[RMDB]
RNA sequence: GGGAACGACUCGAGUAGAGUCGAAAAUCAACGGAUAAAAGGUACCUUAGGGAUAACAGGCUGAUCACGCCCAAGAGUUCAUAUCGACGGCGUGGUUUGGCACCUCGAUGUCGGCUCGUCGCAUCCUCCAUAAAAAGUUGUUCGCAACUUUUUAUGGAAAAGAAACAACAACAACAAC
Reactivity to 2A3 in 0.01 (KOAc 150mM, MgCl2 10mM, bicine 150mM(pH8.5), 24C), signal-to-noise 3, nucleotides 027 to 126: u060c020a030a060c060g040g020a030u110a140a130a020a020g070g020u070a060c010c000u040u070a060g080g020g000a020u050a160a050c040a060g190g000c010u010g010a020u010c010a010c010g000c010c010c010a020a010g020a000g020u170u250c090a060u170a050u210c030g010a020c000g010g000c010g000u010g010g000u000u000u010g010g000c000a040c010c020u010c030g020a020u070g090u070c000g030g020c010u000c030g010u020c010g000c020a030u030c000c020u020
Reactivity to DMS in 0.01 (KOAc 150mM, MgCl2 10mM, bicine 150mM(pH8.5), 24C), signal-to-noise 2, nucleotides 027 to 126: u000c040a060a100c110g000g000a060u010a060a060a070a100g030g020u010a050c030c010u000u030a080g010g000g000a120u000a090a080c160a130g000g020c040u000g000a040u020c030a030c010g040c010c000c030a040a300g000a040g010u000u000c260a110u020a150u000c000g000a300c300g000g000c050g020u030g000g000u000u000u010g020g010c020a100c050c030u010c140g000a060u000g020u000c020g010g000c020u000c020g000u000c040g010c070a090u000c050c000u020
Chemical mapping of a 177-nucleotide RNA with 2A3 and DMS.
DMS adducts were read by reverse transcription with MarathonRT.
Conditions: 150 mM KOAc, 10 mM MgCl2 and 150 mM bicine (pH 8.5), 24 C.
For DMS, 1,073 sequencing reads were counted.